RNA sequence: GGGAACGACUCGAGUAGAGUCGAAAAGCACGUCGGGGCGACGCCACUUGUGAUGCCAUCCAGAAGGCUGCGGAAUUGGUGAACAAGUUUCGCGUUUUUCCUACAUCUUUUGGCGGUAGUGUCAUCACUAACCACGAUCCUUCGGGAUCGUGGUUAGAAAAGAAACAACAACAACAAC
Reactivity to DMS in 0.01 (KOAc 150mM, MgCl2 10mM, bicine 150mM(pH8.5), 24C), signal-to-noise 2, nucleotides 027 to 126: g020c110a040c060g040u000c120g000g010g030g000c120g010a030c110g030c010c160a070c060u000u000g020u000g000a120u000g030c020c030a100u010c010c090a080g000a060a090g000g000c100u020g030c290g020g000a030a050u010u000g020g050u010g030a060a020c050a060a070g000u000u000u000c120g030c000g010u000u000u000u000u040c000c000u020a080c140a050u030c020u000u000u000u000g000g010c210g000g040u000a080g020u000g030u000c040a070u010c100a140
Reactivity to 2A3 in 0.01 (KOAc 150mM, MgCl2 10mM, bicine 150mM(pH8.5), 24C), signal-to-noise 1, nucleotides 027 to 126: g000c030a000c110g090u000c050g080g050g010g000c030g030a020c030g020c010c030a010c000u040u010g030u020g080a080u090g050c010c040a010u000c030c010a070g030a180a060g200g050c130u090g000c060g010g030a110a110u050u050g000g000u080g010a040a050c030a110a000g020u000u060u110c010g020c000g030u020u010u050u010u020c030c010u070a030c010a060u030c040u040u130u040u080g060g000c060g130g000u030a040g060u060g010u070c040a060u090c020a010